[RMDB]
The record gives the reactivity of an RNA of 177 nucleotides to 2A3. For 2A3, 1,962 sequencing reads were counted. It was measured as part of the RMDB library OK1LIB.
RNA sequence: GGGAACGACUCGAGUAGAGUCGAAAACAUGCUGCCUGUGAGCCCCUCAGAGGACACUGAGUCAAAAAACCCCACGCGCUUGGAAGCGCAGGAUGGGAAAAGAAGGUGGCGACCUUCCCCACCCUUCGGAGAUUUCGGUAUUCGUACCGAAAUCUCCAAAAGAAACAACAACAACAAC
Reactivity to 2A3 in 0.01 (KOAc 150mM, MgCl2 10mM, bicine 150mM(pH8.5), 24C), signal-to-noise 3, nucleotides 027 to 126: c020a010u140g010c020u050g000c000c040u040g000u030g070a060g020c040c010c030c000u050c020a020g020a020g100g020a010c000a010c050u060g010a010g100u140c100a010a000a010a010a040a060c010c000c000c000a050c030g040c010g000c010u010u140g100g050a180a000g010c010g000c010a000g040g030a080u020g000g000g040a010a110a020a060g040a030a000g000g000u040g080g060c060g010a080c000c000u000u000c020c000c010c020a020c000c000c000u060u170c070